Structure probing data (2A3) for a 207-nucleotide construct. High 2A3 reactivity points to a flexible backbone, as in loops and unpaired stretches. 2A3 adducts were read by reverse transcription with SuperScript II with manganese.

RNA sequence: GGGAACGACUCGAGUAGAGUCGAAAAUGCAAAUUCACAGAUGGCUGGCAUUCUCUUAGUCAAAUUUUAUGACAAGUUUCAGCUUCAGCUUUUGCACUUAAUGGAUUGACUUGCCAUCCUGCCUGGGCUCUUAUAAUUCUGGAUCAAACAAAACCAAGUGACUAUACCCAUUCGUGGGUAUAGUCACAAAAGAAACAACAACAACAAC
Reactivity to 2A3 in 0.01 (KOAc 150mM, MgCl2 10mM, bicine 150mM(pH8.5), 24C), signal-to-noise 3, nucleotides 027 to 156: u070g000c000a000a020a080u100u080c050a050c030a200g080a090u110g040g000c020u000g010g020c010a050u100u000c060u060c000u050u010a030g010u000c010a020a060a160u180u240u170u170a080u130g010a020c030a030a020g010u020u130u260c020a010g020c000u070u030c010a030g020c000u030u050u030u040g020c040a020c030u040u110a050a060u160g050g010a020u020u080g030a140c020u010u060g000c010c000a020u020c020c010u020g040c000c010u030g030g060g000c010u020c010u010u150a110u020a230a120u070u070c030u030g030g000a010u140c170a130a090a070c010a010a070a150a030c300c100a120a020